[RMDB]
RNA sequence: GGGAACGACUCGAGUAGAGUCGAAAAAAACGUUCCUCCAAGAGUCCCUUCCCCGAUCCCUUACUUAUGUAAGAAAGGAACGGAGAAUGUACCGUUUCGCUCUUUCGGGCUCAUCAGGGAAAGCGCACAUAAGGUAUGAGUUCGCUCAUACCUUAUGAAAAGAAACAACAACAACAAC
Reactivity to 2A3 in 0.01 (KOAc 150mM, MgCl2 10mM, bicine 150mM(pH8.5), 24C), signal-to-noise 4, nucleotides 027 to 126: a000a000a000c020g010u010u000c000c000u010c010c010a090a020g060a020g120u020c040c010c000u000u020c010c010c010c000g020a050u040c010c000c010u070u070a080c020u150u170a120u300g050u040a000a010g000a070a070a030g000g000a010a000c010g040g030a010g060a070a160u190g030u120a080c000c020g010u010u010u030c020g020c010u000c010u030u040u050c030g020g020g000c000u030c060a130u070c030a050g050g000g010a010a050a050g120c070g000c010a010
Reactivity to DMS in 0.01 (KOAc 150mM, MgCl2 10mM, bicine 150mM(pH8.5), 24C), signal-to-noise 5, nucleotides 027 to 126: a050a030a160c090g000u000u000c000c000u000c100c050a140a120g000a090g000u000c030c030c030u000u000c010c000c000c020g000a040u010c050c020c010u000u000a060c080u010u010a110u010g010u000a000a010g000a080a070a110g000g010a000a030c010g010g010a100g020a110a090u010g000u010a080c040c020g010u000u000u000c020g010c130u000c020u000u000u000c050g010g000g010c270u010c060a060u000c110a050g010g000g000a020a040a080g010c110g000c120a200
Chemical mapping of a 177-nucleotide RNA with 2A3 and DMS.